[RMDB]
RNA sequence: GGGAACGACUCGAGUAGAGUCGAAAAGAGUGAUCUGUCUGGUCAAAUCUGAUAACGCGUGAGAGGUGAGUGGUUUUUAACCAGACGAUGUGUGUAAGCACAAGGAAGAGACACCCAAUAACAGGUCUACCCACGCAGGGUUCGCCCUGCGUGGGUAAAAAGAAACAACAACAACAAC
Reactivity to DMS in 0.01 (KOAc 150mM, MgCl2 10mM, bicine 150mM(pH8.5), 24C), signal-to-noise 1, nucleotides 027 to 126: g000a140g000u020g020a070u000c000u010g060u030c170u000g000g000u000c020a000a130a060u000c040u000g000a130u000a060a050c170g020c050g000u010g010a070g010a060g020g000u080g000a220g010u000g080g010u020u000u000u030u020a170a040c020c000a040g000a040c050g000a030u000g000u010g010u000g000u130a120a070g000c000a040c020a000a080g000g000a060a090g000a170g050a130c010a050c000c000c070a260a080u000a170a140c300a000g020g080u000c080
Reactivity to 2A3 in 0.01 (KOAc 150mM, MgCl2 10mM, bicine 150mM(pH8.5), 24C), signal-to-noise 1, nucleotides 027 to 126: g060a000g060u100g000a060u030c030u050g060u060c000u000g000g000u020c020a000a000a000u000c000u010g160a160u080a140a000c000g000c000g200u170g040a140g000a000g080g000u000g100a060g080u180g140g130u080u300u000u060u080a000a000c000c000a000g000a000c180g010a040u000g000u000g000u000g040u180a040a040g020c040a000c000a030a030g080g020a060a000g010a090g050a050c060a050c000c000c000a000a000u140a300a000c020a010g170g020u000c080